Conditions: 150 mM KOAc, 10 mM MgCl2 and 150 mM bicine (pH 8.5), 24 C. The record gives the reactivity of an RNA of 177 nucleotides to DMS. For DMS the reverse transcriptase was MarathonRT.
[RMDB]
RNA sequence: GGGAACGACUCGAGUAGAGUCGAAAAGAUAUGGAGCUUCGGAUGAGGCGACGAUCUCGGAAACGAGGGAGCCUGAUCCGAGAGCUCCUAAGUCAAAGUUGGGGAUCAGUUCGCUGAUCCCCAACAAGCUACGUACGAUGUUCGCAUCGUACGUAGCAAAAGAAACAACAACAACAAC
Reactivity to DMS in 0.01 (KOAc 150mM, MgCl2 10mM, bicine 150mM(pH8.5), 24C), signal-to-noise 1, nucleotides 027 to 126: g000a070u010a300u010g000g000a030g030c000u000u010c000g010g000a030u010g000a010g000g000c000g050a060c280g000a030u010c000u000c020g000g000a090a080a160c020g000a050g010g000g000a040g000c000c000u000g000a000u010c010c010g000a020g010a010g000c000u000c000c010u000a010a050g000u000c030a080a050a180g010u000u000g010g020g000g010a000u000c010a010g030u000u010c260g000c000u000g010a020u000c000c000c000c000a000a000c000a050a060